Structure probing data (DMS and 2A3) for a 177-nucleotide construct.
Reactivities are given for positions 27 through 126.
2A3 adducts were read by reverse transcription with SuperScript II with manganese.
The reactions ran in a buffer of 150 mM KOAc, 10 mM MgCl2 and 150 mM bicine (pH 8.5), at 24 C.

RNA sequence: GGGAACGACUCGAGUAGAGUCGAAAAGGCAGAAGGAGUAGGUCGAAAACUGGUUGCUGAAGCAGCAUAAGCUCCCUGAUGUAAGCUCCCUGAAUAAAUUCACAGCAAUACAUCAAAGUAGUAUGAAUCAAUAAACUAGAUUCGUCUAGUUUAUUGAAAAAGAAACAACAACAACAAC
Reactivity to DMS in 0.01 (KOAc 150mM, MgCl2 10mM, bicine 150mM(pH8.5), 24C), signal-to-noise 9, nucleotides 027 to 126: g010g010c040a050g020a110a070g010g000a070g020u010a080g010g010u010c060g000a070a040a090a090c090u010g010g010u010u010g010c030u010g010a110a110g010c050a070g010c050a060u010a070a100g000c040u000c010c020c020u000g000a010u000g010u010a040a250g000c010u000c010c040c010u000g000a020a070u020a060a090a140u020u000c010a010c130a010g000c010a060a100u010a010c000a010u000c010a040a060a080g010u010a060g010u010a060u010g000a120a150
Reactivity to 2A3 in 0.01 (KOAc 150mM, MgCl2 10mM, bicine 150mM(pH8.5), 24C), signal-to-noise 9, nucleotides 027 to 126: g050g000c040a020g020a110a030g060g050a050g040u100a020g050g060u060c060g060a020a020a040a060c050u060g050g030u070u060g000c020u040g030a090a020g030c040a000g000c010a050u040a130a040g020c010u010c000c000c000u010g000a010u000g000u010a070a020g000c000u000c010c000c000u010g010a010a010u160a210a120a140u070u010c010a030c060a030g000c000a040a130u040a060c000a000u020c000a050a140a020g040u060a010g020u020a050u180g100a050a050